[RMDB]
RNA sequence: GGGAACGACUCGAGUAGAGUCGAAAAGAUAUGGACAAAGCCUCUGGAGAUGCGAUCUCGGAAACGAGAUCCAUCUAUGAAGGAGGAACUACUUUGUCCUAAGUCAAACUACAGCUUCGGCUGUAGACACUUGAUAAUCGUUCGCGAUUAUCAAGUGAAAAGAAACAACAACAACAAC
Reactivity to DMS in 0.01 (KOAc 150mM, MgCl2 10mM, bicine 150mM(pH8.5), 24C), signal-to-noise 4, nucleotides 027 to 126: g020a010u000a300u000g010g000a010c010a000a020a010g000c010c000u000c030u000g000g010a000g000a020u000g010c200g030a000u000c010u000c000g010g010a120a080a220c010g020a000g000a000u000c000c000a000u000c000u000a140u000g010a110a280g010g000a020g010g010a040a030c040u010a300c010u000u000u000g010u000c000c000u020a010a070g000u000c020a130a120a300c010u000a000c010a000g010c000u000u010c290g050g010c000u000g000u000a000g000a300
Reactivity to 2A3 in 0.01 (KOAc 150mM, MgCl2 10mM, bicine 150mM(pH8.5), 24C), signal-to-noise 2, nucleotides 027 to 126: g020a020u090a040u100g000g000a010c000a000a050a000g010c030c020u000c010u040g040g030a020g000a010u020g000c270g040a000u000c000u000c010g000g050a090a070a040c010g010a000g010a000u000c000c010a000u000c000u080a300u040g030a020a020g000g010a010g000g030a030a020c020u170a030c000u070u070u040g000u000c000c000u010a080a020g010u000c030a070a070a100c000u010a000c000a000g010c000u060u200c290g260g000c000u000g000u010a000g000a050
An RNA of 177 nucleotides, treated with DMS and 2A3 and read out base by base. The DMS profile rests on 3,507 reads.